[RMDB]
RNA sequence: GGGAACGACUCGAGUAGAGUCGAAAAGUGAUAGACACCAAUGUGGUGCCUCCACAGUGCCUGCCAGAGGUUGUUCAACAACUACUUAGUAACCCACCACUAGGAAGCUGCUAGGGACGCAGCCAUGACCACACACAGACGCUUACAAGCUGCAGUACACUGGAGCAUUAUUCGUAAUGCUCCAGUGAAAAGAAACAACAACAACAAC
Reactivity to DMS in 0.01 (KOAc 150mM, MgCl2 10mM, bicine 150mM(pH8.5), 24C), signal-to-noise 1, nucleotides 027 to 156: g080u000g040a270u000a100g010a000c010a050c010c030a220a190u000g040u000g050g070u020g030c020c000u000c000c070a060c020a080g000u010g000c000c020u000g000c060c040a080g000a150g000g010u000u000g020u000u010c030a050a110c050a050a050c010u000a120c000u000u000a040g040u000a170a110c060c000c060a080c020c090a080c090u000a040g030g020a140a050g020c000u000g000c010u010a070g020g010g040a110c160g000c040a040g000c020c070a050u000g010a110c010c070a020c070a050c080a110c050a040g000a100c080g010c010u080u010a100c030a030a070g020c000u000g070c000a140g050u000a080